The record gives the reactivity of an RNA of 177 nucleotides to 2A3. Values cover nucleotides 27 to 126. The RNA was probed in 150 mM KOAc, 10 mM MgCl2 and 150 mM bicine (pH 8.5) at 24 C.
RNA sequence: GGGAACGACUCGAGUAGAGUCGAAAACGGGCGCUGGGCGCCAGGAGAGGUUCCCGGAGCCGACCUUCCGGCUGGCCGCUCUGUGACUGCUUCCCGGCUCUGCCCUCUUGGCUGAAGUCCCCGCUGCGCUCUUCCUGCCCUUCGGGGCAGGAAGAGCAAAAGAAACAACAACAACAAC
Reactivity to 2A3 in 0.01 (KOAc 150mM, MgCl2 10mM, bicine 150mM(pH8.5), 24C), signal-to-noise 1, nucleotides 027 to 126: c020g010g020g070c020g030c070u090g010g000g100c000g020c000c000a000g080g090a080g000a010g030g000u140u190c000c000c000g000g030a020g050c040c050g040a150c020c010u130u020c010c000g000g040c050u010g060g010c030c000g010c100u000c050u050g120u100g070a060c000u020g060c020u150u030c010c000c010g000g020c030u050c030u050g000c010c000c000u000c020u000u080g100g000c060u120g120a180a000g180u190c060c050c000c000g020c050u060g050c000